[RMDB]
RNA sequence: GGGAACGACUCGAGUAGAGUCGAAAAGAUAUGGAUUCUGAGCGUUCAACAGCGUGGUGUCGGAAACGACACACACGACAUGAACCCAGAAUCCUAAGUCAAAAGGCUCACCCUUCGGGGUGAGCCACAUCAUCGUUAACUUCGGUUAACGAUGAUGAAAAGAAACAACAACAACAAC
Reactivity to 2A3 in 0.01 (KOAc 150mM, MgCl2 10mM, bicine 150mM(pH8.5), 24C), signal-to-noise 5, nucleotides 027 to 126: g010a000u020a000u040g000g000a000u010u010c010u020g070a130g150c240g050u020u020c190a300a290c110a300g010c010g000u010g050g000u000g000u010c020g000g000a000a000a020c000g010a000c000a000c120a030c000a010c010g030a020c040a300u300g000a000a010c020c000c000a000g000a000a000u000c000c000u010a000a000g000u000c020a000a090a080a170g000g000c000u000c000a000c010c010c030u040u140c300g070g000g000g000u000g000a000g010c000c000a000
Reactivity to DMS in 0.01 (KOAc 150mM, MgCl2 10mM, bicine 150mM(pH8.5), 24C), signal-to-noise 3, nucleotides 027 to 126: g010a000u000a030u010g000g010a020u000u000c000u000g000a120g020c300g010u000u000c000a160a120c200a110g000c000g020u000g000g000u000g000u010c000g020g000a010a000a020c010g000a010c000a000c010a040c000a000c000g000a020c070a300u020g020a010a000c010c010c000a010g010a010a010u000c000c000u000a000a050g000u000c020a120a110a170a100g020g020c000u010c000a010c000c000c000u010u020c250g040g020g000g010u000g000a000g000c000c010a000
Record summary:
An RNA of 177 nucleotides, treated with 2A3 and DMS and read out base by base. DMS adducts were read by reverse transcription with MarathonRT. The DMS profile rests on 4,123 reads. The RNA was probed in 150 mM KOAc, 10 mM MgCl2 and 150 mM bicine (pH 8.5) at 24 C.